[RMDB]
RNA sequence: GGGAACGACUCGAGUAGAGUCGAAAAGGGGUCUGUCGGUGUCUUGGAUUUACUUAUGAGGUGAGGCUGAAGCCUCCACGGCCUCACUACCCACCAUAAGUUGUCAGACAUGAUCGACAGACGGAGGCACCCAAACGCGUCGCUUCGGCGACGCGAACUAAAGCAUUUUGUUCGCAAAAUGCUUUAGAAAAGAAACAACAACAACAAC
Reactivity to 2A3 in 0.01 (KOAc 150mM, MgCl2 10mM, bicine 150mM(pH8.5), 24C), signal-to-noise 3, nucleotides 027 to 156: g060g010g040g000u000c010u000g000u010c000g030g000u020g010u050c110u200u300g160g000a080u210u270u230a020c000u000u000a000u010g000a000g040g000u000g000a000g010g000c000u010g010a020a000g020c000c000u000c000c000a020c010g010g000c000c000u000c000a000c000u010a000c040c030c020a060c000c000a000u000a000a000g020u000u000g030u050c080a030g030a100c000a040u120g100a170u200c000g000a000c000a000g000a000c010g010g010a000g000g000c000a020c000c000c000a020a130a040c020g000c010g000u000c010g000c000u080u080c280g080g030c000g000a000c020g000c000g010a020a010
Reactivity to DMS in 0.01 (KOAc 150mM, MgCl2 10mM, bicine 150mM(pH8.5), 24C), signal-to-noise 1, nucleotides 027 to 156: g010g000g000g010u010c010u000g050u010c020g040g050u000g040u010c010u000u020g020g020a110u000u000u000a010c020u010u000a020u010g000a300g010g070u000g010a030g050g080c010u010g070a060a140g010c010c000u000c000c010a200c060g040g010c000c000u020c030a010c020u000a040c020c020c030a300c040c020a000u000a010a030g000u000u010g020u000c070a150g020a090c000a030u000g000a090u010c000g030a050c000a020g010a050c040g030g000a110g010g020c050a050c030c010c020a010a070a150c020g000c010g000u000c000g010c010u000u000c300g060g000c000g010a010c000g060c030g000a010a090